[RMDB]
RNA sequence: GGGAACGACUCGAGUAGAGUCGAAAAGAUAUGGAGUGACCGGGUUGUCAUCCCAUUAGAGCGUUUGACGUAUAUCGGAAACGAUAUACCGAGCUCAUGGGAGUGACAACCCGGUCACUCCUAAGUCCGUUAAUGGUAUGUUCGCAUACCAUUAACGAAAAGAAACAACAACAACAAC
Reactivity to DMS in 0.01 (KOAc 150mM, MgCl2 10mM, bicine 150mM(pH8.5), 24C), signal-to-noise 4, nucleotides 027 to 126: g000a110u000a300u010g010g000a030g010u000g000a010c000c010g000g010g020u010u000g020u000c010a110u000c010c000c000a020u000u020a110g020a000g030c010g020u000u010u010g010a200c300g010u000a000u000a000u010c000g010g000a180a100a240c020g020a010u000a000u000a000c010c020g000a060g000c000u010c010a050u000g000g000g000a050g020u010g000a010c000a020a000c010c000c000g010g000u000c000a000c000u010c000c000u010a000a100g000u010c040